This 207-nucleotide RNA was probed chemically with 2A3.
Conditions: 150 mM KOAc, 10 mM MgCl2 and 150 mM bicine (pH 8.5), 24 C.
Values cover nucleotides 27 to 156.
The data come from the RNA Mapping Database (RMDB), library RSTRND.
High 2A3 reactivity points to a flexible backbone, as in loops and unpaired stretches.
2A3 adducts were read by reverse transcription with SuperScript II with manganese.
RNA sequence: GGGAACGACUCGAGUAGAGUCGAAAACGCGAAACAGUACCGGACUCACCAAGUAGCAUCCUGUCUUUCGGAGACUGCUUGGUUAAAUAAAAGAGAGACUAAACAUGUAGUGCCGAGGAUGUAGGCUUUCUGGACGCGGGUUCAAGUCCCGCCGCCUCCAUAAUUCACGCUUCGGCGUGAAUUAUGGAAAAGAAACAACAACAACAAC
Reactivity to 2A3 in 0.01 (KOAc 150mM, MgCl2 10mM, bicine 150mM(pH8.5), 24C), signal-to-noise 1, nucleotides 027 to 156: c070g020c030g010a060a060a000c040a040g050u090a100c000c060g060g100a070c040u040c070a010c020c000a000a020g010u010a000g010c010a050u020c010c010u010g040u020c040u010u090u050c000g000g000a000g020a020c000u010g000c000u010u010g000g000u010u040a010a020a000u050a020a020a020a000g030a020g010a000g020a010c050u100a030a110a060c070a160u190g050u130a050g040u080g140c050c020g000a020g020g080a060u050g070u050a010g020g000c000u030u070u040c060u050g040g000a010c060g020c000g000g000g030u090u110c060a010a000g100u070c000c000c000g010c000c020g000c000c050u000